[RMDB]
RNA sequence: GGGAACGACUCGAGUAGAGUCGAAAAGAUAUGGAGAUGCCGGGCUCGAUAAGAUGUUGUCGGAAACGACAAUACAUCUUUUGACGAGCCGCAUCUCCUAAGUCAAAGGACUUCUUCGGAAGUCCAAGUCCCUAUCAGCGUUCGCGCUGAUAGGGACAAAAGAAACAACAACAACAAC
Reactivity to 2A3 in 0.01 (KOAc 150mM, MgCl2 10mM, bicine 150mM(pH8.5), 24C), signal-to-noise 1, nucleotides 027 to 126: g040a000u000a060u100g050g000a020g000a020u010g130c190c300g300g050g140c020u040c000g150a160u080a300a010g010a000u000g000u060u030g020u020c050g040g000a040a010a000c000g000a000c030a060a040u200a060c080a010u040c070u060u070u080u210g300a180c070g030a000g000c020c000g040c000a000u000c000u000c010c000u000a020a000g000u020c010a060a000a300g010g000a010c000u000u040c030u050u100c300g200g000a030a000g000u010c010c010a020a020
The record gives the reactivity of an RNA of 177 nucleotides to 2A3. The RNA was probed in 150 mM KOAc, 10 mM MgCl2 and 150 mM bicine (pH 8.5) at 24 C.